This 177-nucleotide RNA was probed chemically with 2A3. The RNA was probed in 150 mM KOAc, 10 mM MgCl2 and 150 mM bicine (pH 8.5) at 24 C. It was measured as part of the RMDB library M2PK50.
RNA sequence: GGGAACGACUCGAGUAGAGUCGAAAACACACGUGCUUCGGCACGUGUGAAACCUAGUCAAAAUAACGCAAGACUAGCAAAGCGUAAGUACGAAAGUACAAAAAAGGUGAGUGUUCGCACUCACCAAGUGCUCUGAUGGGUUCGCCCAUCAGAGCACAAAAGAAACAACAACAACAAC
Reactivity to 2A3 in 0.01 (KOAc 150mM, MgCl2 10mM, bicine 150mM(pH8.5), 24C), signal-to-noise 1, nucleotides 027 to 126: c020a020c000a000c040g010u000g020c010u110u020c130g220g000c010a000c040g010u010g000u000g010a000a000a010c000c000u020a000g000u070c060a080a000a040a230u160a190a000c010g000c060a170a030g010a090c010u030a050g110c090a060a070a010g000c020g000u070a160a140g000u030a050c000g040a150a000a000g000u000a010c000a010a110a070a000a020a140g020g000u040g000a040g000u070g000u070u170c280g000c070a000c000u020c010a000c000c000a010a010